Conditions: 150 mM KOAc, 10 mM MgCl2 and 150 mM bicine (pH 8.5), 24 C.
Chemical mapping of a 177-nucleotide RNA with 2A3 and DMS.
The 2A3 profile rests on 2,165 reads.
It was measured as part of the RMDB libraries RFM100 and RFMREP.
2A3 adducts were read by reverse transcription with SuperScript II with manganese.
[RMDB]
RNA sequence: GGGAACGACUCGAGUAGAGUCGAAAACCGGUGGAUGGCUCGGCUCGGGCGCCGACGAAGGGCGUGCCAAGCUGCGAAAAGCCCGGGGGAGGCGCAAGGAGCCUUAGAACCCGGGAUUCCCGAAUGGUCACUAUGACCGAUUCGUCGGUCAUAGUGAAAAAGAAACAACAACAACAAC
Reactivity to 2A3 in 0.01 (KOAc 150mM, MgCl2 10mM, bicine 150mM(pH8.5), 24C), signal-to-noise 2, nucleotides 027 to 126: c000c000g010g010u050g000g070a110u110g040g010c040u030c060g040g000c060u010c070g100g040g020c000g000c000c000g020a050c000g050a010a080g040g000g000c010g020u050g050c010c000a110a040g030c100u060g000c040g030a050a050a020a040g010c010c000c010g000g000g050g030g000a020g000g000c010g000c020a000a040g070g000a010g050c010c030u010u040a050g000a010a000c000c000c000g000g010g000a050u010u020c000c000c000g010a040a110u170g110g010
Reactivity to DMS in 0.01 (KOAc 150mM, MgCl2 10mM, bicine 150mM(pH8.5), 24C), signal-to-noise 3, nucleotides 027 to 126: c000c020g000g020u010g000g000a100u010g020g000c020u000c260g000g000c040u000c090g000g000g020c020g010c000c000g000a160c100g000a300a170g000g000g000c000g020u020g040c020c030a050a120g010c130u000g000c020g020a090a130a110a150g000c000c010c000g000g020g010g000g020a120g000g020c000g060c040a050a100g000g000a080g000c010c000u010u010a050g000a190a170c120c000c000g000g000g020a070u000u000c000c020c010g000a100a140u020g010g010